[RMDB]
RNA sequence: GGGAACGACUCGAGUAGAGUCGAAAAUUCGAGGAGCACCAGUCCUUAAGCUUAGCAUACCUGCAUAUCACAAAGGAGGAAGCGUGAAAGCGUAACGACCGUUCCUAAAUACGCAUAACUAAGCGGAUAUUAAUUUUAUAUUCGUAUAAAAUUAAUAAAAAGAAACAACAACAACAAC
Reactivity to 2A3 in 0.01 (KOAc 150mM, MgCl2 10mM, bicine 150mM(pH8.5), 24C), signal-to-noise 2, nucleotides 027 to 126: u080u030c030g020a000g030g000a000g010c010a020c040c020a000g070u070c010c000u010u050a100a010g000c010u020u030a000g000c010a020u030a090c000c010u010g030c010a000u070a030u070c040a020c030a070a000a000g020g000a010g000g030a050a040g020c000g030u040g050a070a030a000g030c010g000u040a020a050c030g050a080c020c000g020u020u010c000c000u010a000a010a000u080a010c000g000c010a010u020a040a040c000u010a040a020g000c000g000g010a000
Reactivity to DMS in 0.01 (KOAc 150mM, MgCl2 10mM, bicine 150mM(pH8.5), 24C), signal-to-noise 4, nucleotides 027 to 126: u050u010c030g020a050g000g010a090g020c060a100c040c030a150g000u020c020c040u000u020a060a110g020c020u000u010a080g000c030a050u030a080c100c070u010g000c030a050u010a050u020c110a080c130a060a060a110g010g000a150g000g020a120a100g000c010g000u010g000a100a070a100g000c020g010u020a030a160c090g010a080c050c020g000u000u000c010c000u000a030a060a070u030a050c020g020c020a060u010a090a110c150u010a070a070g000c010g000g000a140

Structure probing data (2A3 and DMS) for a 177-nucleotide construct. The 2A3 profile rests on 2,051 reads. The data come from the RNA Mapping Database (RMDB), library OK1LIB. The RNA was probed in 150 mM KOAc, 10 mM MgCl2 and 150 mM bicine (pH 8.5) at 24 C. The DMS profile rests on 7,698 reads. For DMS the reverse transcriptase was MarathonRT.